RNA sequence: GGGAACGACUCGAGUAGAGUCGAAAAGAUAUGGAUCGGUACCCAGCGUUGAAAUCGGAAACGAUGGAGCUGCGUACACGAUCCUAAGUCAAACAUAAUCUUAUCCCUUCGGGGAUAAGAUUAUGAACUGUAUAACAUAGUUCGCUAUGUUAUACAGAAAAGAAACAACAACAACAAC
Reactivity to 2A3 in 0.01 (KOAc 150mM, MgCl2 10mM, bicine 150mM(pH8.5), 24C), signal-to-noise 8, nucleotides 027 to 126: g020a020u090a030u200g000g000a000u000c010g010g010u010a010c170c180c000a000g000c010g250u300u070g030a030a030a010u010c000g010g040a080a050a040c010g000a010u020g000g020a010g000c000u010g000c010g000u010a000c300a050c070g000a000u000c000c000u000a050a020g020u010c050a140a030a040c000a000u010a000a000u010c000u000u000a000u020c000c000c000u010u040c300g110g000g010g000a000u000a000a000g000a000u000u000a000u000g000a010a010
Reactivity to DMS in 0.01 (KOAc 150mM, MgCl2 10mM, bicine 150mM(pH8.5), 24C), signal-to-noise 9, nucleotides 027 to 126: g010a050u000a300u000g000g000a000u000c000g010g010u000a010c000c080c000a010g010c010g000u000u010g010a080a130a020u000c000g010g000a120a110a190c010g000a010u000g000g010a120g020c000u000g010c300g000u000a000c000a080c000g000a000u000c000c000u000a010a080g010u000c040a090a120a280c000a000u000a000a000u000c000u000u000a010u000c000c000c000u000u010c220g020g000g010g000a000u000a000a000g000a000u000u000a000u000g000a050a190